RNA sequence: GGGAACGACUCGAGUAGAGUCGAAAAGCCAAUCAGUUCCAGAUGGCGGGCAAUACGGGGUUCGAUAACAGCCUGGCGUGGAACGCGCAGCCCGGUAACUCGGUGCAGAACAACCCUUAUUCGUCGAAGGGACCGACCGUCGCACAGCUGAGCGGUGUCUUAGUGAUACUUUCGAGUAUCACUAAGAAAAAGAAACAACAACAACAAC
Reactivity to DMS in 0.01 (KOAc 150mM, MgCl2 10mM, bicine 150mM(pH8.5), 24C), signal-to-noise 2, nucleotides 027 to 156: g000c040c000a120a170u010c050a050g030u010u000c070c040a300g000a090u000g050g000c030g060g020g040c060a130a120u010a080c060g040g000g020g000u000u010c070g000a160u020a000a060c030a010g030c040c010u020g020g000c000g030u000g040g010a110a100c110g020c090g010c040a130g000c000c000c050g030g030u000a130a140c180u010c020g030g020u000g060c140a090g010a120a030c070a070a150c020c010c020u000u000a130u000u010c060g010u000c050g000a120a070g040g000g010a130c000c000g010a040c020c010g020u000c040g000c120a050c090a110g000c010u000g000a050g040c140g030g000u000g010
Reactivity to 2A3 in 0.01 (KOAc 150mM, MgCl2 10mM, bicine 150mM(pH8.5), 24C), signal-to-noise 3, nucleotides 027 to 156: g050c000c000a000a080u030c010a020g010u070u000c040c010a030g030a130u090g050g000c040g030g000g000c060a080a050u090a150c060g010g010g000g050u030u090c060g100a090u100a290a070c070a000g020c000c000u030g030g000c020g020u060g040g150a160a050c040g000c010g020c030a020g000c000c020c020g020g020u080a120a070c040u010c110g050g030u090g030c050a020g070a050a010c050a050a060c000c000c000u050u060a100u110u140c120g030u030c060g090a030a040g000g020g010a020c010c010g060a060c000c000g010u040c030g000c020a100c070a090g020c020u040g010a010g010c010g000g000u050g040